[RMDB]
RNA sequence: GGGAACGACUCGAGUAGAGUCGAAAAACAUUAAUGACAUGUCCACGUAUAUCUCUGUUAAGGGCAAGAUGUCAGAGGCACUCCAGAUAACUUGGCAUCCAGCAAGUACUUUGGUAUACAAGAAAGGCUCUAACACGAGUUUCGACUCGUGUUAGAGAAAAGAAACAACAACAACAAC
Reactivity to 2A3 in 0.01 (KOAc 150mM, MgCl2 10mM, bicine 150mM(pH8.5), 24C), signal-to-noise 2, nucleotides 027 to 126: a020c060a040u200u210a160a110u190g050a040c020a060u060g030u000c030c030a090c050g000u040a000u030a030u010c010u000c010u060g080u170u090a080a080g100g000g030c000a000a030g010a040u030g010u000c020a000g050a060g230g040c080a000c090u060c050c010a000g030a190u110a130a050c010u030u010g030g000c010a050u050c040c010a020g000c000a060a040g060u010a030c010u030u000u040g030g020u050a030u010a060c030a040a050g100a110a070a020g220g000
Reactivity to DMS in 0.01 (KOAc 150mM, MgCl2 10mM, bicine 150mM(pH8.5), 24C), signal-to-noise 2, nucleotides 027 to 126: a150c050a080u000u000a180a040u000g000a100c130a020u000g000u010c000c010a090c140g040u000a030u010a130u010c020u000c020u020g000u010u000a090a060g000g020g010c040a130a090g000a070u000g010u020c000a040g000a100g010g000c130a040c090u000c040c050a110g000a130u000a080a060c040u000u000g010g010c020a040u010c010c050a110g010c090a040a040g020u000a050c070u000u000u000g010g010u000a010u000a050c080a070a130g000a100a050a060g000g010